Source information: An RNA of 177 nucleotides, treated with 2A3 and DMS and read out base by base.

RNA sequence: GGGAACGACUCGAGUAGAGUCGAAAAGAAGGCACUUUCGAGUGCCUUCAUGGGGAGCUCAGGUCUCCCUCCCUUGCAAACUGCCUAAGGGAGGAGACCUAAUUAGGUGCACUUUCGAGUGCACCAAAGCACUAGACGAAUUCGUUCGUCUAGUGCUAAAAGAAACAACAACAACAAC
Reactivity to 2A3 in 0.01 (KOAc 150mM, MgCl2 10mM, bicine 150mM(pH8.5), 24C), signal-to-noise 3, nucleotides 027 to 126: g000a000a020g010g000c010a000c030u040u080u160c260g110a010g000u000g000c020c000u000u000c020a000u000g000g000g000g000a050g030c040u040c160a020g030g010u000c000u030c040c010c010u010c000c000c010u000u000g020c040a160a280a300c150u170g020c010c040u150a000a020g000g000g000a000g000g000a000g000a000c000c000u010a000a020u080u110a030g000g000u000g000c000a000c000u050u070u060c210g110a020g000u000g000c000a000c010c000a030a000
Reactivity to DMS in 0.01 (KOAc 150mM, MgCl2 10mM, bicine 150mM(pH8.5), 24C), signal-to-noise 4, nucleotides 027 to 126: g000a000a020g010g010c000a000c000u010u010u010c170g020a010g020u000g000c000c000u000u000c000a010u000g010g000g000g000a190g020c090u000c100a010g000g000u000c000u010c120c040c040u000c000c000c000u000u000g000c050a150a090a180c240u000g020c140c300u000a030a020g000g000g000a030g020g010a020g000a000c000c000u000a010a030u000u010a070g010g000u000g000c000a020c000u000u000u010c200g000a010g010u000g000c000a010c000c000a030a030